[RMDB]
RNA sequence: GGGAACGACUCGAGUAGAGUCGAAAAGAAGAGCUGAACCGCCUGUGGCACGAUGCCAUAGCCGACGCGCAGACCAGUUACCAGAAGCUGCUGGAGGCCGGCGCGUCGCUCCAGGACGCUCGUGCAACGUCUUUAGCCCUUUCGAGGGCUAAAGACGAAAAGAAACAACAACAACAAC
Reactivity to 2A3 in 0.01 (KOAc 150mM, MgCl2 10mM, bicine 150mM(pH8.5), 24C), signal-to-noise 1, nucleotides 027 to 126: g050a080a020g010a000g000c050u050g030a070a000c000c020g020c020c060u090g010u020g090g030c000a020c110g060a080u250g000c010c000a000u030a020g090c120c030g000a030c000g000c030g020c000a000g040a050c020c000a000g110u190u170a080c000c010a050g040a140a030g270c200u300g040c000u010g060g030a020g040g060c010c000g050g000c020g000c020g000u000c010g000c010u000c020c000a010g000g090a040c010g000c050u010c010g000u000g000c030a090a090
Reactivity to DMS in 0.01 (KOAc 150mM, MgCl2 10mM, bicine 150mM(pH8.5), 24C), signal-to-noise 2, nucleotides 027 to 126: g000a140a080g010a040g020c030u010g020a110a100c140c020g000c060c020u010g050u010g000g010c000a060c090g030a140u000g020c000c030a100u000a010g000c200c000g030a020c010g010c020g010c000a030g000a020c000c010a180g020u000u010a140c000c010a030g010a170a180g020c200u020g000c010u000g010g000a100g030g000c010c000g020g000c000g000c000g000u000c000g010c020u000c110c090a090g000g020a140c110g000c060u000c020g030u000g020c030a060a090